RNA sequence: GGGAACGACUCGAGUAGAGUCGAAAAUAAACCUGAAAUUACACCUCCCUGAACUCAGAAGUAACGGACUCAGUCGGUGUGAAAUUCAUUUAGACUAACACUAUCAAUGAGCGGCCUUCUAUGGUAAAAAUCUCCUUAUAUUCGUAUAAGGAGAUUUAAAAGAAACAACAACAACAAC
Reactivity to DMS in 0.01 (KOAc 150mM, MgCl2 10mM, bicine 150mM(pH8.5), 24C), signal-to-noise 4, nucleotides 027 to 126: u010a070a090a130c020c010u010g000a070a100a170u000u010a120c080a090c030c040u000c050c040c020u000g020a090a100c070u000c110a050g010a080a070g010u010a080a090c060g020g010a100c040u000c030a040g010u000c170g010g050u000g000u000g000a050a090a060u010u010c090a080u000u000u000a080g000a050c060u000a130a050c050a030c030u000a070u000c080a100a100u010g000a040g020c030g000g010c060c020u000u010c030u000a060u010g000g010u010a010a040
Reactivity to 2A3 in 0.01 (KOAc 150mM, MgCl2 10mM, bicine 150mM(pH8.5), 24C), signal-to-noise 2, nucleotides 027 to 126: u060a000a060a010c000c010u010g050a070a030a010u120u040a070c060a030c040c010u040c040c000c000u010g030a040a010c020u030c100a020g000a120a020g040u020a080a000c020g030g130a080c040u030c040a000g060u070c010g050g000u000g000u010g040a080a020a000u100u080c060a060u130u080u120a010g020a020c020u010a010a000c000a000c070u070a060u220c050a090a060u040g010a000g040c010g000g000c020c000u040u050c030u040a100u110g040g060u120a100a100